RNA sequence: GGGAACGACUCGAGUAGAGUCGAAAAGUGCUGCGCCACGUGGAGGAUGUGCCAGUGGGGGAGGGCUGUCUGCUCCACCACCUCCCUCGUGCGAUCCGAGGACCCGUUUUCGACGAUGAGCACCUCGCAGUUAGGGCAUCUUCGGAUGCCCUAACUGAAAAGAAACAACAACAACAAC
Reactivity to DMS in 0.01 (KOAc 150mM, MgCl2 10mM, bicine 150mM(pH8.5), 24C), signal-to-noise 1, nucleotides 027 to 126: g000u000g000c020u020g010c160g000c050c020a050c030g030u000g020g010a060g000g010a070u000g000u000g010c120c090a070g030u010g000g010g000g000g000a020g020g000g010c240u010g020u020c090u000g040c020u000c030c020a080c010c070a100c010c020u010c020c000c040u000c010g000u000g000c140g000a070u010c020c040g000a110g000g000a100c070c030c070g000u000u000u000u000c020g000a100c150g000a090u010g000a060g030c060a100c030c000u010c080g010